[RMDB]
RNA sequence: GGGAACGACUCGAGUAGAGUCGAAAAUUGCGCUUGCCUAUUUAGGCAUACUUCUCAGGAUGGCGCUUUGCAGUCCAACAAGAUCCAGGGACUGUACAGAAUUUUCCUAUACCUCGAGUCGGGUUUGAAAACGUUAGGCACUUCGGUGCCUAACGAACCUUUAGAAGCGGUUCGCCGCUUCUAAAGGAAAAGAAACAACAACAACAAC
Reactivity to 2A3 in 0.01 (KOAc 150mM, MgCl2 10mM, bicine 150mM(pH8.5), 24C), signal-to-noise 2, nucleotides 027 to 156: u010u040g000c000g000c010u030u030g000c000c000u120a270u210u300u300a030g000g000c000a010u110a030c050u150u060c100u080c140a070g080g060a110u160g010g020c000g000c000u020u020u020g000c000a000g000u030c010c000a050a050c070a270a040g090a240u130c110c070a060g000g000g050a010c000u000g000u000a020c040a060g210a090a020u000u000u010u000c000c000u020a010u020a120c030c050u000c000g000a000g000u010c000g010g050g000u060u100u070g070a080a080a000a000c020g010u000u000a000g000g040c010a010c010u020u020c260g060g000u000g020c000c000u000a000a020c000g000a000a000

Structure probing data (2A3) for a 207-nucleotide construct. The 2A3 profile rests on 1,108 reads. Conditions: 150 mM KOAc, 10 mM MgCl2 and 150 mM bicine (pH 8.5), 24 C.